[RMDB]
RNA sequence: GGGAACGACUCGAGUAGAGUCGAAAAGAUGCUGGUUAUUUAGACAAAGAUUUAGAAACAAUUGUAGGUGUACAAACUGAAAAGCCAUUCAAACGUUCAAUGCAACCAUUCGGUGGUAUUCGUAUGGCCAUUUUGUAAUAUUCGUAUUACAAAAUGGAAAAGAAACAACAACAACAAC
Reactivity to 2A3 in 0.01 (KOAc 150mM, MgCl2 10mM, bicine 150mM(pH8.5), 24C), signal-to-noise 9, nucleotides 027 to 126: g040a020u090g010c040u040g030g010u100u030a110u100u130u090a090g040a050c080a030a160a010g100a100u090u150u170a120g070a120a100a010c080a050a090u080u090g040u090a050g030g020u050g020u060a050c060a050a110a040c040u040g040a050a010a040a010g030c020c010a040u070u090c010a110a070a010c070g030u070u070c050a050a030u100g040c020a040a030c010c000a050u120u100c060g060g000u040g050g030u070a060u030u070c030g010u060a030u050g060g000
Reactivity to DMS in 0.01 (KOAc 150mM, MgCl2 10mM, bicine 150mM(pH8.5), 24C), signal-to-noise 6, nucleotides 027 to 126: g010a030u010g010c040u010g000g000u000u010a070u010u010u030a040g020a070c070a070a090a120g010a090u010u020u030a080g010a120a090a110c130a110a100u000u010g000u000a050g010g020u020g000u020a040c070a050a050a080c070u020g010a040a040a050a120g010c030c030a030u000u010c080a030a070a120c100g030u010u030c060a020a020u010g000c010a070a050c020c030a130u010u020c100g000g010u000g000g020u010a040u000u010c060g000u010a040u020g000g010
This 177-nucleotide RNA was probed chemically with 2A3 and DMS. The data come from the RNA Mapping Database (RMDB), library OK1LIB. The 2A3 profile rests on 12,059 reads. For DMS the reverse transcriptase was MarathonRT. Conditions: 150 mM KOAc, 10 mM MgCl2 and 150 mM bicine (pH 8.5), 24 C.